[RMDB]
The data come from the RNA Mapping Database (RMDB), library OK2TRN. The record gives the reactivity of an RNA of 177 nucleotides to 2A3 and DMS. For 2A3 the reverse transcriptase was SuperScript II with manganese. DMS adducts were read by reverse transcription with MarathonRT. Conditions: 150 mM KOAc, 10 mM MgCl2 and 150 mM bicine (pH 8.5), 24 C.
RNA sequence: GGGAACGACUCGAGUAGAGUCGAAAAGGCUAGCCGCACCAGGUUAUGCGUCUUGGGAGGAAGUUCACCCCGUAGAGCUAUAAUAGCCGCUUUCAACGCCUUCUCUGCAGCCUGAUGCGCGUGAAACCACUGAAACAAGGUUCGCCUUGUUUCAGUGAAAAGAAACAACAACAACAAC
Reactivity to 2A3 in 0.01 (KOAc 150mM, MgCl2 10mM, bicine 150mM(pH8.5), 24C), signal-to-noise 6, nucleotides 027 to 126: g010g010c030u020a020g040c020c000g000c010a000c000c010a010g040g010u100u190a080u140g010c040g030u050c100u150u120g030g000g010a030g000g030a180a060g020u100u120c060a140c000c040c020c010g020u070a060g020a030g050c040u070a060u080a300a210u140a150g020c030c030g010c050u040u120u100c060a050a020c040g020c030c000u070u030c050u000c040u110g010c000a010g020c010c000u020g000a010u010g000c020g000c030g000u010g020a030a000a000c020
Reactivity to DMS in 0.01 (KOAc 150mM, MgCl2 10mM, bicine 150mM(pH8.5), 24C), signal-to-noise 6, nucleotides 027 to 126: g020g020c020u010a300g020c040c010g000c030a040c020c010a040g000g020u000u000a070u000g010c030g020u010c120u000u000g000g010g010a170g000g000a050a070g000u000u010c100a250c040c020c010c030g020u000a060g010a100g020c020u000a100u010a110a110u010a040g020c030c040g010c070u000u010u010c050a070a070c070g010c040c010u000u000c010u010c110u000g020c020a050g000c030c010u000g000a040u000g020c020g000c140g010u000g000a090a120a150c140